[RMDB]
RNA sequence: GGGAACGACUCGAGUAGAGUCGAAAAGGUCGGCCCGAUGGUCGAGGAAAUCAACCCCGAGUUCCCCGCCUCGAUGGGCGGGCUGCCGCCGGGUGCGCCGAACCUGCCGAGCGCACGCCAGGCCGUCUACGUUACUCUCUUUCGAGAGAGUAACGUAAAAAGAAACAACAACAACAAC
Reactivity to 2A3 in 0.01 (KOAc 150mM, MgCl2 10mM, bicine 150mM(pH8.5), 24C), signal-to-noise 2, nucleotides 027 to 126: g040g020u120c040g020g010c000c000c030g090a170u210g030g020u010c010g020a020g000g050a100a140a120u170c050a070a110c030c010c020c040g020a040g070u030u030c010c010c030c000g030c010c000u000c030g090a100u130g000g100g020c000g010g000g010c030u050g010c010c010g000c000c040g000g010g010u010g000c000g000c020c010g020a030a060c000c050u040g110c050c000g060a070g010c020g000c020a010c010g040c020c010a020g000g000c030c000g030u050c030
Reactivity to DMS in 0.01 (KOAc 150mM, MgCl2 10mM, bicine 150mM(pH8.5), 24C), signal-to-noise 3, nucleotides 027 to 126: g020g010u000c030g040g010c000c000c070g010a070u020g010g040u000c000g010a020g000g000a110a060a100u000c150a080a250c060c020c040c050g010a170g000u000u000c040c000c000c110g010c000c000u000c050g020a030u010g010g000g010c000g000g000g010c030u000g000c050c000g010c060c030g000g010g010u000g000c000g000c010c030g010a090a080c140c090u000g000c080c010g000a130g000c000g000c010a010c020g010c020c030a100g020g010c010c080g020u000c100